[RMDB]
Source information: The record gives the reactivity of an RNA of 177 nucleotides to DMS and 2A3. The RNA was probed in 150 mM KOAc, 10 mM MgCl2 and 150 mM bicine (pH 8.5) at 24 C. For 2A3, 1,114 sequencing reads were counted. The DMS profile rests on 4,455 reads. DMS adducts were read by reverse transcription with MarathonRT. 2A3 adducts were read by reverse transcription with SuperScript II with manganese.

RNA sequence: GGGAACGACUCGAGUAGAGUCGAAAAAUUUUAUUAUUAGGCGGCAUACAGUUAAUUUCAAUUGGUGUUGUAGGUGAAUAUAUUGGCAGGAUAUAUUAUGAAGUUAAGGCACGUCCUAAAUAUAUUACAUAACUAUGUCUUUCGAGACAUAGUUAUGAAAAGAAACAACAACAACAAC
Reactivity to DMS in 0.01 (KOAc 150mM, MgCl2 10mM, bicine 150mM(pH8.5), 24C), signal-to-noise 2, nucleotides 027 to 126: a080u000u050u000u020a030u020u010a180u010u010a080g000g000c010g000g020c040a100u000a070c190a110g020u000u000a040a030u010u010u020c050a070a110u020u020g000g020u000g020u000u000g020u000a030g020g030u020g000a040a010u010a020u000a040u000u010g010g020c110a040g000g000a050u000a030u010a020u010u010a080u030g010a060a040g010u000u010a020a040g000g010c020a060c100g010u020c000c000u000a020a020a060u020a030u010a050u010u020a130
Reactivity to 2A3 in 0.01 (KOAc 150mM, MgCl2 10mM, bicine 150mM(pH8.5), 24C), signal-to-noise 3, nucleotides 027 to 126: a000u100u120u040u020a040u050u000a040u040u010a030g000g040c000g020g030c020a020u110a060c080a170g070u050u070a040a060u070u080u090c080a040a100u070u130g060g000u110g010u050u060g020u070a090g000g110u090g040a010a000u070a020u040a050u060u040g060g040c110a030g000g060a000u010a000u000a000u110u000a070u100g070a040a020g040u060u010a010a020g060g000c040a010c170g060u100c050c000u030a010a050a010u100a000u040a040u100u030a030